[RMDB]
RNA sequence: GGGAACGACUCGAGUAGAGUCGAAAAGGCACUCGAAUGACACACGCCAAGAGAUUAUAGGAUAGGAUCUUCACCCCCACGUCAUACACGAGCUUAUCGCGCCCGUACAGGUCUGGAGAUAUGAUGGUCUGCUCAGAGGUGAUGCCGCUUUUAAACAUCUGUACUUUUGAUUCGUCAAAAGUACAGAAAAAGAAACAACAACAACAAC
Reactivity to DMS in 0.01 (KOAc 150mM, MgCl2 10mM, bicine 150mM(pH8.5), 24C), signal-to-noise 2, nucleotides 027 to 156: g010g000c030a070c030u000c020g020a140a080u010g000a130c020a080c040a050c060g020c040c050a060a300g010a080g020a100u000u060a110u010a130g010g010a080u000a080g040g000a090u000c020u000u010c040a240c010c000c020c030c000a100c130g020u020c030a070u000a040c070a070c080g000a100g000c040u000u030a100u000c100g020c070g000c020c060c030g020u000a060c040a100g030g020u010c000u000g020g010a060g000a090u000a110u000g020a060u000g000g020u000c040u010g000c000u020c040a050g000a080g000g020u010g000a070u000g030c000c030g010c080u010u010u010u020a030a050a070c090a250
Reactivity to 2A3 in 0.01 (KOAc 150mM, MgCl2 10mM, bicine 150mM(pH8.5), 24C), signal-to-noise 3, nucleotides 027 to 156: g020g000c000a000c060u030c030g070a070a050u070g040a000c010a010c020a010c090g040c040c010a050a010g010a020g010a080u060u070a070u130a130g090g040a090u080a090g060g020a030u010c000u180u060c050a110c000c020c000c020c020a020c060g040u010c020a020u050a100c070a020c100g000a010g010c040u130u110a070u210c030g010c000g000c020c000c010g010u030a030c020a020g060g060u010c010u050g060g000a040g010a040u090a090u120g030a010u080g010g070u000c000u030g050c000u030c010a030g010a020g000g020u010g060a050u060g010c000c020g040c030u060u090u000u110a070a060a010c020a030